An RNA of 177 nucleotides, treated with 2A3 and DMS and read out base by base. For DMS the reverse transcriptase was MarathonRT. 2A3 adducts were read by reverse transcription with SuperScript II with manganese. The reactions ran in a buffer of 150 mM KOAc, 10 mM MgCl2 and 150 mM bicine (pH 8.5), at 24 C.
RNA sequence: GGGAACGACUCGAGUAGAGUCGAAAAGAUAUGGAUCCUAUAGGCAAGGCGCUCGGAAACGAGGCGCUGAUGACCCUAAGGAUCCUAAGUCAAAAGUUGAAUGUUCUCUUCGGAGAACAUUCAACAAGUCAAUAUAGUUGUUCGCAACUAUAUUGACAAAAGAAACAACAACAACAAC
Reactivity to 2A3 in 0.01 (KOAc 150mM, MgCl2 10mM, bicine 150mM(pH8.5), 24C), signal-to-noise 5, nucleotides 027 to 126: g030a020u090a030u150g000g010a010u010c000c010u160a180u100a300g010g000c020a070a060g010g010c010g010c010u020c020g040g030a040a070a030c020g020a050g140g060c000g000c000u000g000a020u100g020a020c020c000c010u020a020a010g020g000a000u000c000c000u000a060a000g060u020c040a080a000a070a130g000u000u010g000a010a000u000g000u010u000c010u000c000u020u100c300g070g000a010g000a000a000c000a000u000u000c000a000a000c000a000a000
Reactivity to DMS in 0.01 (KOAc 150mM, MgCl2 10mM, bicine 150mM(pH8.5), 24C), signal-to-noise 7, nucleotides 027 to 126: g010a040u000a300u010g010g010a010u000c000c010u000a220u000a070g000g000c020a130a190g000g010c010g020c000u000c010g010g000a100a070a150c010g010a020g010g010c010g010c010u000g010a050u010g000a190c300c000c010u000a100a050g000g000a010u000c000c000u000a000a070g010u000c030a050a080a130a150g010u000u000g000a010a010u000g010u000u000c000u000c000u000u010c210g020g000a000g010a010a010c000a000u000u000c000a000a000c000a070a080